[RMDB]
RNA sequence: GGGAACGACUCGAGUAGAGUCGAAAAGAUAUGGACCACUCUGGUGUCUAGUUAGGACAUGAGUACGUAUCGGAAACGAUACCGUACUCAACAGCCUACUGCUAGACACCAGAGUGGUCCUAAGUCAGUGAACGUCACUGUUCGCAGUGACGUUCACAAAAGAAACAACAACAACAAC
Reactivity to DMS in 0.01 (KOAc 150mM, MgCl2 10mM, bicine 150mM(pH8.5), 24C), signal-to-noise 1, nucleotides 027 to 126: g000a090u000a300u010g000g000a000c010c000a020c000u000c000u010g000g040u000g000u000c000u030a000g080u000u000a010g010g040a100c110a100u000g020a000g010u000a010c000g000u030a000u020c000g020g000a130a120a260c020g000a010u000a050c090c300g020u020a000c000u000c000a000a080c300a150g000c000c000u000a080c300u020g010c040u000a000g000a000c000a000c000c000a000g000a000g030u000g000g000u020c000c000u000a000a000g000u000c010a090
This 177-nucleotide RNA was probed chemically with DMS. Values cover nucleotides 27 to 126. Conditions: 150 mM KOAc, 10 mM MgCl2 and 150 mM bicine (pH 8.5), 24 C. The DMS profile rests on 625 reads.